[RMDB]
RNA sequence: GGGAACGACUCGAGUAGAGUCGAAAAAGAAUAAGACCAAAUUUUAAAGGUCCUCCAGUAAACGUUACUUGCAAUAUUUUUAUCAACAGUUUUGGAUCAGUCACAGAAACCACAAUGGACUACAGAGCUAGUGUCUCGUCUUCGGACGAGACACUAGAAAAGAAACAACAACAACAAC
Reactivity to 2A3 in 0.01 (KOAc 150mM, MgCl2 10mM, bicine 150mM(pH8.5), 24C), signal-to-noise 1, nucleotides 027 to 126: a000g150a080a000u150a050a000g000a000c000c000a020a160a020u160u300u240u270a220a230a020g000g000u050c000c000u000c000c000a020g000u030a000a280a000c000g000u030u020a000c000u030u130g060c020a000a000u050a050u300u000u270u100u060a180u130c050a030a070c000a150g000u000u030u000u110g020g000a080u010c000a000g000u020c000a000c000a070g090a030a070a070c000c000a000c110a020a000u000g010g020a000c000u000a030c030a000g220a000g000
This 177-nucleotide RNA was probed chemically with 2A3. Values cover nucleotides 27 to 126. It was measured as part of the RMDB library OK1LIB.